[RMDB]
RNA sequence: GGGAACGACUCGAGUAGAGUCGAAAAUAUGAAGACCGCAUCUUGGACUUUAAAGUUCUUGAUAAUGGUAUCAUUAGGGAUGUAAAUCCUGAUGAUAAGUGCUUUGCUAAUAAGCACCGGUCCUUCAGCGGCAAGCGGUUCGCCGCUUGCAAAAGAAACAACAACAACAAC
Reactivity to DMS in 0.01 (KOAc 150mM, MgCl2 10mM, bicine 150mM(pH8.5), 24C), signal-to-noise 2, nucleotides 027 to 129: u080a090u030g000a020a040g000a000c010c020g000c020a030u020c010u030u020g020g000a020c010u030u040u040a120a070a090g020u030u000c010u030u000g000a100u040a050a050u000g020g000u020a010u030c010a030u000u000a000g040g040g050a050u060g030u080a110a200a080u020c020c010u000g020a030u020g000a010u000a020a090g050u000g010c040u000u000u000g030c210u070a110a040u050a050a000g000c010a010c000c000g050g000u030c000c000u000u000c020a000g000c000g080
Reactivity to 2A3 in 0.01 (KOAc 150mM, MgCl2 10mM, bicine 150mM(pH8.5), 24C), signal-to-noise 4, nucleotides 027 to 129: u250a060u070g000a000a010g000a000c010c000g000c010a020u000c010u020u010g010g000a000c000u050u110u240a170a300a000g000u010u010c000u000u020g030a030u030a200a090u100g040g000u030a000u000c000a000u000u050a080g040g000g050a030u090g070u300a030a130a070u010c000c000u000g000a000u010g010a000u000a010a050g010u010g000c020u020u030u030g070c060u070a110a070u060a150a060g000c000a010c010c000g000g000u050c000c080u010u010c000a050g020c050g030